Chemical mapping of a 207-nucleotide RNA with 2A3 and DMS. For DMS, 1,898 sequencing reads were counted. 2A3 adducts were read by reverse transcription with SuperScript II with manganese. The RNA was probed in 150 mM KOAc, 10 mM MgCl2 and 150 mM bicine (pH 8.5) at 24 C.
RNA sequence: GGGAACGACUCGAGUAGAGUCGAAAAAGAGCUUGUCUCAGUGUAGCAGGACAAGCCGCAGACAAAACCCCUCAGACACUGAGUUACAGAAGGAAGGGCUUUAUUCAGCCGGGGGCUUUGGCAAGGGUCACGUCUCUAACAACCGAGCUCCCCAAGAUACGGUACUAGUAUUCGUACUAGUACCGUAAAAAGAAACAACAACAACAAC
Reactivity to 2A3 in 0.01 (KOAc 150mM, MgCl2 10mM, bicine 150mM(pH8.5), 24C), signal-to-noise 1, nucleotides 027 to 156: a000g040a010g010c010u020u010g000u050c040u010c150a140g040u010g080u150a060g020c130a040g000g040a000c020a000a020g000c030c010g020c020a120g050a080c040a010a080a020a050c010c000c030c000u070c020a060g010a050c010a010c120u000g000a000g060u050u140a090c040a060g110a080a020g100g050a030a080g030g010g000c000u160u150u020a140u110u170c040a010g080c050c000g000g000g000g000g000c040u130u110u200g050g000c040a030a060g030g000g000u070c100a040c160g100u020c020u000c000u020a110a050c040a060a040c040c010g020a000g020c010u060c040c000c000c000a000a010g010a040
Reactivity to DMS in 0.01 (KOAc 150mM, MgCl2 10mM, bicine 150mM(pH8.5), 24C), signal-to-noise 1, nucleotides 027 to 156: a140g000a070g000c000u010u010g000u000c010u000c040a070g000u010g000u000a080g010c060a030g000g000a050c000a060a090g040c030c000g030c140a220g010a180c040a140a020a080a070c020c000c000c020u080c080a180g030a130c080a110c060u010g000a140g020u000u010a230c040a060g000a120a110g020g030a100a060g020g030g000c010u000u000u000a110u010u000c110a140g020c070c000g050g040g000g020g040c020u000u000u000g010g050c010a050a130g050g060g010u020c100a110c150g000u000c020u010c000u010a050a030c030a030a070c030c020g000a010g020c010u010c000c020c020c030a040a090g000a300